[RMDB]
Background
Source: RMDB library M2RFPK, as collected in RNAgym. Structure probing data (DMS and 2A3) for a 207-nucleotide construct. For DMS the reverse transcriptase was MarathonRT. Reactivities are given for positions 27 through 156.
RNA sequence: GGGAACGACUCGAGUAGAGUCGAAAAGGGUGAUGUCUCCUAACCUUUAUCAAUGGGGGCACUCGGUCGUGCUGUGGGUAGAAAUUUUAUUUCGUGCCUACCUUAGACGCUUGUCGUCGGGAGGAUGUGGGACUGAUGAACUUCGGUUCAUCAGUAAGCUGAAAGAACUGUUCGCAGUUCUUUCAGCAAAAGAAACAACAACAACAAC
Reactivity to DMS in 0.01 (KOAc 150mM, MgCl2 10mM, bicine 150mM(pH8.5), 24C), signal-to-noise 1, nucleotides 027 to 156: g040g000g000u000g020a040u000g000u000c000u000c010c010u000a140a120c060c010u010u010u010a180u000c150a170a080u000g020g080g000g020g030c010a050c060u010c070g000g010u000c050g040u000g040c060u000g000u140g010g020g020u000a290g000a020a030a080u010u010u000u000a070u000u010u010c020g000u000g060c010c000u000a060c020c060u000u010a120g000a060c050g010c070u000u000g010u000c010g010u000c020g000g000g010a090g010g030a090u000g000u020g010g020g010a070c020u010g000a040u020g000a020a000c000u000u000c300g050g030u010u000c000a010u010c000a030g000u000a060a150
Reactivity to 2A3 in 0.01 (KOAc 150mM, MgCl2 10mM, bicine 150mM(pH8.5), 24C), signal-to-noise 2, nucleotides 027 to 156: g050g000g020u060g020a050u000g010u060c010u010c020c000u010a110a190c000c050u110u150u200a180u160c060a010a140u150g000g010g000g000g000c010a010c040u010c020g000g000u040c020g030u070g010c080u080g020u020g010g000g000u000a040g120a010a070a050u210u200u210u190a080u110u020u070c080g050u130g020c000c000u040a100c020c000u020u070a030g010a010c010g020c060u180u300g100u250c010g000u010c020g000g040g020a060g010g040a090u100g050u120g020g000g000a000c000u000g000a000u000g010a000a000c000u010u020c110g090g000u010u010c000a000u000c000a000g000u000a000a040